Structure probing data (DMS and 2A3) for a 177-nucleotide construct.
Source: RMDB library TTRDES, as collected in RNAgym.
Conditions: 150 mM KOAc, 10 mM MgCl2 and 150 mM bicine (pH 8.5), 24 C.
Reactivities are given for positions 27 through 126.

RNA sequence: GGGAACGACUCGAGUAGAGUCGAAAAAGAUAUGGAUGCCUUGUCAGGCAUCGCAUAUCGAUGAAAGCUGUCGGAAACGACAGCUGGAGAUAUGAGUGGAUGCCUUGGAUUUAGGCAUCCUAAGUCGGUAUGUGUCUUAGUUCGCUAAGACACAUACAAAAGAAACAACAACAACAAC
Reactivity to DMS in 0.01 (KOAc 150mM, MgCl2 10mM, bicine 150mM(pH8.5), 24C), signal-to-noise 9, nucleotides 027 to 126: a120g000a010u000a060u000g000g010a010u000g010c000c000u010u010g020u020c300a100g010g000c000a000u000c000g010c000a000u000a000u000c000g000a130u010g010a270a150a030g000c000u000g010u000c000g010g000a120a110a210c010g010a010c000a000g000c000u000g000g010a140g010a080u010a070u010g010a140g010u000g000g010a010u000g000c000c000u000u000g010g010a210u000u010u000a010g010g020c000a000u000c000c000u000a020a080g010u010c120g020
Reactivity to 2A3 in 0.01 (KOAc 150mM, MgCl2 10mM, bicine 150mM(pH8.5), 24C), signal-to-noise 7, nucleotides 027 to 126: a000g030a020u040a020u030g010g000a000u010g000c000c000u210u190g300u300c250a020g000g020c000a000u000c000g000c000a000u000a000u020c010g010a060u100g040a040a070a010g010c000u000g000u010c010g050g040a120a080a140c020g000a000c000a000g000c000u000g030g040a120g020a040u250a100u300g110a080g220u210g050g010a010u010g000c020c000u150u090g300g070a300u300u300u180a020g000g000c000a000u030c000c000u000a050a020g090u030c140g050